[RMDB]
RNA sequence: GGGAACGACUCGAGUAGAGUCGAAAAAGCCAUAUCAUUACGAUGGUAUGGCAAGUCCGUGACGGCGAUGGAUCCCGCCUGGCCGAUGCCGAACUGCCGAUCUGGCUGAUGGUUCCUGCCCCGUCAAAAAACGUAAAGCACUUCGGUGCUUUACGAAGAUUUCAGCGUACUUCGGUACGCUGAAAUCAAAAGAAACAACAACAACAAC
Reactivity to 2A3 in 0.01 (KOAc 150mM, MgCl2 10mM, bicine 150mM(pH8.5), 24C), signal-to-noise 1, nucleotides 027 to 156: a000g000c000c000a010u010a010u000c000a000u020u060a060c250g150a020u000g010g000u000a000u000g010g000c000a010a000g060u020c010c000g030u050g020a000c000g030g000c110g060a040u120g040g000a000u050c030c000c030g000c030c010u030g030g000c000c020g100a100u180g050c020c060g020a260a170c150u220g010c020c010g090a090u070c040u090g020g000c000u070g060a170u130g000g000u020u020c000c000u050g050c010c000c010c000g000u000c000a070a000a000a000a070a070c010g000u000a000a000a000g010c000a000c020u020u080c150g120g010u000g000c000u000u000u000a000c000g000a020a000

Background:
Chemical mapping of a 207-nucleotide RNA with 2A3. The RNA was probed in 150 mM KOAc, 10 mM MgCl2 and 150 mM bicine (pH 8.5) at 24 C. As a SHAPE reagent, 2A3 marks flexible, mostly unpaired nucleotides at the ribose 2'-OH.